[RMDB]
RNA sequence: GGGAACGACUCGAGUAGAGUCGAAAAGGAGAUGCUCGAUCAGGUGCUGCCCUUCAUGGACCACGAGGUGGUCGAGGUGCUCGUGAAGGACUUUUCCAAGCGGGGGAUCACCAUCCUCACCUCCUCGAUACCGAUCCGAGUUCGCUCGGAUCGGUAUAAAAGAAACAACAACAACAAC
Reactivity to 2A3 in 0.01 (KOAc 150mM, MgCl2 10mM, bicine 150mM(pH8.5), 24C), signal-to-noise 1, nucleotides 027 to 126: g000g030a100g030a050u140g010c030u100c060g150a240u140c060a100g100g020u010g040c010u010g030c020c020c000u030u080c060a120u120g060g040a050c030c010a030c130g000a000g000g000u050g030g030u040c110g000a000g030g020u010g060c040u050c020g020u010g020a130a200g040g010a020c040u120u080u280u080c080c000a040a000g030c010g000g010g000g020g020a000u120c010a010c060c010a010u040c010c000u000c010a050c000c010u000c000c000u030c010g000
Reactivity to DMS in 0.01 (KOAc 150mM, MgCl2 10mM, bicine 150mM(pH8.5), 24C), signal-to-noise 1, nucleotides 027 to 126: g030g010a100g010a040u000g020c070u010c060g000a070u000c110a120g000g000u020g030c100u000g000c050c020c030u000u000c060a070u000g000g020a120c050c030a220c070g010a050g000g000u000g010g010u000c140g000a020g010g000u000g000c060u000c010g020u010g010a110a140g010g040a150c300u000u000u020u000c040c020a000a210g020c060g010g000g000g000g000a020u010c120a070c300c040a070u010c000c030u000c040a030c020c000u000c000c000u000c010g010
Chemical mapping of a 177-nucleotide RNA with 2A3 and DMS. 2A3 adducts were read by reverse transcription with SuperScript II with manganese. Conditions: 150 mM KOAc, 10 mM MgCl2 and 150 mM bicine (pH 8.5), 24 C. The 2A3 profile rests on 804 reads.